Structure probing data (2A3 and DMS) for a 177-nucleotide construct. Values cover nucleotides 27 to 126. The RNA was probed in 150 mM KOAc, 10 mM MgCl2 and 150 mM bicine (pH 8.5) at 24 C. The 2A3 profile rests on 1,216 reads. It was measured as part of the RMDB library M2PK90.
[RMDB]
RNA sequence: GGGAACGACUCGAGUAGAGUCGAAAAAGAAAUAGAUGAAGUAGGAGGCUGUUAGCGCUCUAGUGUGUCUUCAGAUAUGAUAUGUCUGGCCUACUUCAUCGGAUACAUAGGACCAACGCUAAAAAAAACAUUUGAAUUUGUUCGCAAAUUCAAAUGUAAAAGAAACAACAACAACAAC
Reactivity to 2A3 in 0.01 (KOAc 150mM, MgCl2 10mM, bicine 150mM(pH8.5), 24C), signal-to-noise 1, nucleotides 027 to 126: a000g070a010a030a020u130a050g000a000u010g000a000a000g020u000a000g000g030a000g000g060c060u030g080u300u080a060g040c040g000c060u090c050u200a100g080u090g000u050g010u050c020u060u060c010a000g060a030u110a000u090g250a100u130a010u260g040u030c010u000g000g040c000c000u010a000c000u000u000c000a000u000c000g000g010a000u030a010c080a020u150a050g000g090a050c030c040a050a020c030g000c100u150a060a110a060a000a000a000a000
Reactivity to DMS in 0.01 (KOAc 150mM, MgCl2 10mM, bicine 150mM(pH8.5), 24C), signal-to-noise 2, nucleotides 027 to 126: a110g000a100a060a110u000a130g010a000u000g020a010a000g010u010a010g000g030a170g000g010c070u000g010u000u000a030g040c120g010c070u010c080u000a080g020u000g020u000g020u000c000u020u000c030a000g000a030u000a020u010g010a130u010a300u000g000u000c010u000g000g000c010c000u000a010c010u000u000c000a010u000c000g010g020a120u000a060c110a090u020a070g000g010a050c030c080a070a030c110g030c100u020a010a000a000a120a080a100a070